[RMDB]
RNA sequence: GGGAACGACUCGAGUAGAGUCGAAAAGAAAGAAAGAAGUGGCAGACUGGAAAAUCUCUGCAGGCAAAUGUGAUGUCACUGAAGCAAUCACACACUUGCCCGUAGAGAUUCUACAGUCUGACAUCAAUAGACUUAUGACAUUCGUGUCAUAAGUCUAAAAAGAAACAACAACAACAAC
Reactivity to 2A3 in 0.01 (KOAc 150mM, MgCl2 10mM, bicine 150mM(pH8.5), 24C), signal-to-noise 9, nucleotides 027 to 126: g060a010a020a000g090a020a080a000g090a140a020g030u030g020g010c000a000g000a000c000u010g000g020a020a010a010a010u000c010u000c000u000g000c000a010g010g000c010a020a140a300u010g000u000g010a030u020g050u140c060a050c300u250g080a100a010g030c050a040a150u020c000a000c000a000c000a000c020u000u000g000c000c000c000g000u000a000g000a000g000a000u000u000c000u010a010c000a000g000u000c000u000g000a000c000a000u070c000a000a040
Reactivity to DMS in 0.01 (KOAc 150mM, MgCl2 10mM, bicine 150mM(pH8.5), 24C), signal-to-noise 6, nucleotides 027 to 126: g010a100a120a110g010a120a080a100g010a180a140g010u000g010g000c010a000g010a010c000u000g000g000a100a260a030a000u000c000u000c010u000g010c000a020g000g000c000a010a010a030u000g010u000g000a050u000g010u020c120a140c190u040g010a120a140g020c090a050a070u010c020a020c000a010c080a070c060u000u000g000c000c000c050g030u010a000g000a010g000a010u000u000c010u000a250c000a000g000u000c000u000g000a000c020a010u000c080a060a140